[RMDB]
RNA sequence: GGGAACGACUCGAGUAGAGUCGAAAAGGGGUCUCGGCAAGUGGAGAAGCUUCUUGGAUUUAUAGGCUGAAGCCUCCACGGCCUAUUGUCAGAAGCCUCCAUGAUGACCCGAGACGGAGGCACCCAAAAGAUGCCAACAGUUCGCUGUUGGCAUCAACUCAUUAAAAUACUUCGGUAUUUUAAUGAGAAAAGAAACAACAACAACAAC
Reactivity to 2A3 in 0.01 (KOAc 150mM, MgCl2 10mM, bicine 150mM(pH8.5), 24C), signal-to-noise 1, nucleotides 027 to 156: g090g010g020g010u010c020u020c020g000g030c030a050a160g000u000g070g010a030g020a260a190g010c020u020u050c010u120u190g080g030a080u130u300u210a020u080a000g010g010c040u050g070a060a020g070c020c000u010c000c010a000c000g000g000c010c000u000a000u010u050g090u100c190a150g000a010a010g030c100c000u020c010c000a000u040g050a190u000g010a010c020c000c020g000a000g010a000c030g010g000a000g020g000c000a010c000c010c000a030a100a050a040g000a000u000g000c000c000a030a000c020a000g080u160u140c210g050c120u010g010u000u000g000g010c000a000u000c000a000a000